Chemical mapping of a 207-nucleotide RNA with DMS and 2A3. The data come from the RNA Mapping Database (RMDB), library OK3TST.
RNA sequence: GGGAACGACUCGAGUAGAGUCGAAAAAUAUCUUGGUAAACCUUCUUUUGUUUCCUUUUGUCUUUGCAGAUAAAUUAUUAGUCAUAACUGUAGCAACAAAAGAAAGUGAUGGAUUCCAUCGAUUUAUGCAGUCAGCCAAAUAUUUCAAUUAUACUGACAGUGAGUAAAAUUUCGAUUUUACUCACUGAAAAGAAACAACAACAACAAC
Reactivity to DMS in 0.01 (KOAc 150mM, MgCl2 10mM, bicine 150mM(pH8.5), 24C), signal-to-noise 2, nucleotides 027 to 156: a100u010a040u000c050u000u000g030g010u000a100a110a110c000c010u000u000c030u010u010u000u000g020u000u000u000c030c030u020u000u000u010g000u000c020u000u000u000g000c080a040g000a090u010a050a050a200u000u000a090u000u020a200g010u030c110a060u000a070a090c040u000g010u000a100g010c090a040a050c010a000a040a030a030g010a010a030a050g000u010g010a120u000g000g000a180u000u000c090c010a050u000c040g000a170u000u000u000a050u050g010c020a050g000u000c030a210g000c000c020a020a050a090u000a040u010u010u000c010a060a130u000u000a180u010a170c090u010g010a230
Reactivity to 2A3 in 0.01 (KOAc 150mM, MgCl2 10mM, bicine 150mM(pH8.5), 24C), signal-to-noise 3, nucleotides 027 to 156: a010u050a010u030c050u030u040g010g000u030a060a060a110c030c000u020u070c020u030u080u020u040g020u000u080u100c000c000u110u130u030u100g050u040c060u060u110u080g000c010a010g070a060u110a100a100a060u150u160a090u080u130a140g130u100c070a060u040a210a020c030u020g020u050a010g020c010a000a020c010a000a030a010a010g020a020a030a010g080u050g020a030u050g020g110a150u260u030c010c010a010u010c050g030a030u030u140u200a060u180g030c000a000g030u040c030a010g040c020c020a060a020a010u050a020u050u010u000c010a010a020u170u040a110u150a190c060u020g060a010